[RMDB]
Conditions: 150 mM KOAc, 10 mM MgCl2 and 150 mM bicine (pH 8.5), 24 C. An RNA of 177 nucleotides, treated with DMS and 2A3 and read out base by base. The 2A3 profile rests on 31,032 reads. The DMS profile rests on 69,808 reads.
RNA sequence: GGGAACGACUCGAGUAGAGUCGAAAAUGAGGGACAGUUUGCCGAAGGCGGAGCGCAGGUGGGCUCUCUGACGUAUCCGAUGCAGGCAGGCGCUCUGAAAAAGGGCGGCUACAUUUGCAUUAAUGGAAUAUAAAUACGAUUUCGAUCGUAUUUAUAUAAAAGAAACAACAACAACAAC
Reactivity to DMS in 0.01 (KOAc 150mM, MgCl2 10mM, bicine 150mM(pH8.5), 24C), signal-to-noise 9, nucleotides 027 to 126: u020g010a060g010g000g000a080c060a070g010u020u020u010g020c030c020g010a120a110g010g010c050g010g010a100g010c100g010c050a050g000g020u010g010g010g000c030u000c030u000c020u010g010a110c110g000u010a100u010c020c020g000a020u000g000c020a040g000g000c070a020g000g000c000g000c000u000c010u000g000a050a050a080a140a030g000g000g000c000g010g000c010u000a030c040a060u030u030u010g010c010a020u010u010a080a100u030g010g000a170
Reactivity to 2A3 in 0.01 (KOAc 150mM, MgCl2 10mM, bicine 150mM(pH8.5), 24C), signal-to-noise 9, nucleotides 027 to 126: u160g010a060g020g020g020a020c030a060g050u050u110u100g070c020c010g060a070a040g080g030c050g020g030a050g020c040g000c040a010g020g050u060g030g040g010c010u010c000u000c020u040g040a060c040g060u070a130u040c010c020g000a010u020g010c020a000g020g010c000a000g020g050c000g000c000u000c000u020g100a120a060a030a030a020g000g010g000c000g010g000c000u020a030c020a090u100u130u060g020c010a020u020u100a120a130u180g040g030a060